[RMDB]
RNA sequence: GGGAACGACUCGAGUAGAGUCGAAAAGGUCAGGCCUGAUCGGAAACAGCAGCAGGUGAGUCCGCCUUAUGUGAAGGAUCGGCUGAAACACGAGGAAAUACUGAGCCAACGCAAGACGGUAGGCGAAAAAAUCUAGUUCACUUCGGUGAACUAGAAAGUACUUUCUACGGUUCGCCGUAGAAAGUACAAAAGAAACAACAACAACAAC
Reactivity to 2A3 in 0.01 (KOAc 150mM, MgCl2 10mM, bicine 150mM(pH8.5), 24C), signal-to-noise 1, nucleotides 027 to 156: g050g030u090c020a000g020g070c000c010u190g000a000u030c020g020g080a170a130a020c030a030g050c000a000g000c020a020g030g000u030g020a080g090u080c080c050g000c010c000u110u140a100u040g100u030g030a040a040g060g000a020u060c060g030g010c020u020g000a030a080a010c070a030c000g010a080g010g100a040a060a050u240a160c040u060g030a020g040c030c000a060a000c070g000c120a000a080g060a050c030g010g040u130a060g030g010c070g000a090a060a000a000a000a040u000c000u000a000g000u000u000c000a000c020u050u000c150g040g000u000g000a000a010c000u000a000g000a000a000a000